[RMDB]
RNA sequence: GGGAACGACUCGAGUAGAGUCGAAAAUAUUCAGCGAUUGAUCAGAUCGCUUAAACCGGAUUGAGUUCCCUCAGUGAUCUACUAUUUGGCGCAGUUAUUUAGGAGCUGUAUUUCGCUGAAUACUACCUGAAAAGGAUGGGUUCGCCCAUCCUUUUCAAAAAGAAACAACAACAACAAC
Reactivity to DMS in 0.01 (KOAc 150mM, MgCl2 10mM, bicine 150mM(pH8.5), 24C), signal-to-noise 2, nucleotides 027 to 126: u000a020u000u000c000a010g030c000g000a020u010u000g020a110u010c160a050g010a020u010c010g010c000u010u010a030a100a080c130c150g000g000a050u010u010g020a220g020u010u000c010c010c100u010c240a040g020u000g000a010u000c030u010a120c120u010a090u010u000u010g010g010c150g000c080a050g000u000u000a100u010u010u000a140g010g010a150g010c020u010g020u010a090u010u010u010c020g010c000u000g000a020a020u000a010c050u000a150c050c020
Reactivity to 2A3 in 0.01 (KOAc 150mM, MgCl2 10mM, bicine 150mM(pH8.5), 24C), signal-to-noise 1, nucleotides 027 to 126: u000a000u000u000c010a000g020c000g000a010u020u100g030a100u260c080a000g000a020u040c020g000c000u010u020a040a040a010c040c000g020g000a020u070u160g050a100g300u040u010c010c040c000u000c080a010g000u010g050a030u000c060u110a080c030u010a160u210u090u220g140g070c060g010c010a040g000u080u030a150u160u170u150a130g070g140a040g020c010u000g000u000a080u000u020u030c000g000c010u000g000a000a000u000a010c010u000a040c010c030